Chemical mapping of a 177-nucleotide RNA with 2A3 and DMS. Conditions: 150 mM KOAc, 10 mM MgCl2 and 150 mM bicine (pH 8.5), 24 C. DMS adducts were read by reverse transcription with MarathonRT. Values cover nucleotides 27 to 126.
[RMDB]
RNA sequence: GGGAACGACUCGAGUAGAGUCGAAAACAAGGGGAUCUGCAAAGCACGGCACGUAAGCACUCAGAUGCGAAAGUAGGAACUGCGUUAGGCGUCCAGACGCAGGUAGCCCGAAUUUUAUAGCUGAUGAUGUAAUCGCUAGAUUCGUCUAGCGAUUACAAAAAGAAACAACAACAACAAC
Reactivity to 2A3 in 0.01 (KOAc 150mM, MgCl2 10mM, bicine 150mM(pH8.5), 24C), signal-to-noise 6, nucleotides 027 to 126: c070a060a060g030g020g010g010a040u010c010u050g030c030a020a090a030g070c030a020c070g040g000c020a010c080g030u090a040a050g010c010a030c030u070c030a020g030a140u090g020c030g100a120a040a010g060u090a030g020g050a070a020c010u000g000c020g030u050u080a090g030g030c020g010u010c010c020a010g010a020c040g010c000a000g040g000u040a030g080c000c010c000g010a000a010u090u090u040u090a130u070a060g030c050u040g030a070u060g010a020
Reactivity to DMS in 0.01 (KOAc 150mM, MgCl2 10mM, bicine 150mM(pH8.5), 24C), signal-to-noise 6, nucleotides 027 to 126: c080a100a120g010g010g000g010a040u000c020u010g000c060a050a110a130g000c100a050c070g010g020c040a070c050g010u010a060a110g010c080a090c050u010c050a090g000a100u000g000c090g010a040a040a070g010u030a100g000g000a110a140c040u000g000c040g000u010u020a110g020g020c030g000u010c020c030a120g010a080c060g000c000a000g000g010u010a070g000c020c010c010g010a090a090u020u020u030u020a110u000a090g010c050u010g000a100u010g010a230